[RMDB]
RNA sequence: GGGAACGACUCGAGUAGAGUCGAAAAGGUAAUGGACGACGGCGGCGUGUGGCGAACAGGGAUACCGGUAGUCAGUGUCUGGAAUAUCCCAAGGGGCGGCGGAGCUAGCACCCCGACACGUUAAGGCAAAACUUCGCACGGUUCGCCGUGCGAAGAACGAGUUACUAAUGUUCGCAUUAGUAACUCGAAAAGAAACAACAACAACAAC
Reactivity to DMS in 0.01 (KOAc 150mM, MgCl2 10mM, bicine 150mM(pH8.5), 24C), signal-to-noise 1, nucleotides 027 to 156: g020g030u000a060a060u000g000g000a060c010g000a090c030g000g000c090g020g020c040g020u010g000u010g010g020c070g020a060a090c050a140g030g000g010a110u000a030c010c000g020g000u000a110g010u000c080a080g000u000g040u000c010u000g010g010a090a210u000a080u000c010c000c000a080a110g000g040g020g000c050g030g020c010g000g030a100g050c030u020a100g000c080a000c030c000c030c010g000a040c060a040c050g020u000u000a100a050g020g020c060a050a050a070a120c010u000u000c000g000c000a000c000g010g000u000u020c250g010c000c000g050u000g000c000g020a000a000g000a040a060
Reactivity to 2A3 in 0.01 (KOAc 150mM, MgCl2 10mM, bicine 150mM(pH8.5), 24C), signal-to-noise 3, nucleotides 027 to 156: g050g020u070a020a040u070g040g030a000c010g000a000c040g020g000c010g010g020c020g010u060g030u030g020g030c040g020a060a030c060a080g020g020g010a020u040a070c030c040g010g010u080a050g110u090c130a040g070u040g030u100c020u020g000g030a110a080u020a020u060c020c000c030a040a070g000g010g000g010c080g020g000c020g020g020a040g080c060u070a000g000c020a080c020c010c020c010g020a020c010a000c070g050u080u100a050a040g040g000c010a040a000a060a090c010u000u000c000g000c000a000c010g000g030u030u060c150g000c110c000g000u000g000c020g000a000a000g000a010a000

Record summary:
An RNA of 207 nucleotides, treated with DMS and 2A3 and read out base by base. Conditions: 150 mM KOAc, 10 mM MgCl2 and 150 mM bicine (pH 8.5), 24 C. For 2A3, 2,626 sequencing reads were counted.